RNA sequence: GGGAACGACUCGAGUAGAGUCGAAAAACCUUUGUGCUUAUCAGGCCACUAAGACAGCGUGUAAGGCCUCCCAUUGGGAGGCUAUCACGCAAUGACGGUGGUAUUGGAUAAGCACUCUGGUAAAACCUGGUCGUAUCGUUCGCGAUACGACCAGGAAACCUCCAAAAUGGUUCGCCAUUUUGGAGGUAAAAGAAACAACAACAACAAC
Reactivity to 2A3 in 0.01 (KOAc 150mM, MgCl2 10mM, bicine 150mM(pH8.5), 24C), signal-to-noise 2, nucleotides 027 to 156: a000c000c000u000u000u010g000u010g000c000u000u000a010u010c020a070g000g100c010c000a000c050u080a120a020g130a110c040a060g290c200g000u010g080u050a300a260g090g000c020c040u070c000c000c000a300u300u300g010g010g000a000g000g000c000u000a010u010c010a010c020g020c010a000a000u040g030a020c030g040g020u020g020g040u080a140u020u290g130g000a010u000a000a000g010c000a000c000u000c000u000g020g020u070a080a080a000a000c000c000u030g010g000u000c000g000u000a000u000c000g050u070u100c280g050c050g120a000u000a000c040g000a000c010c000a000g000g000a000a000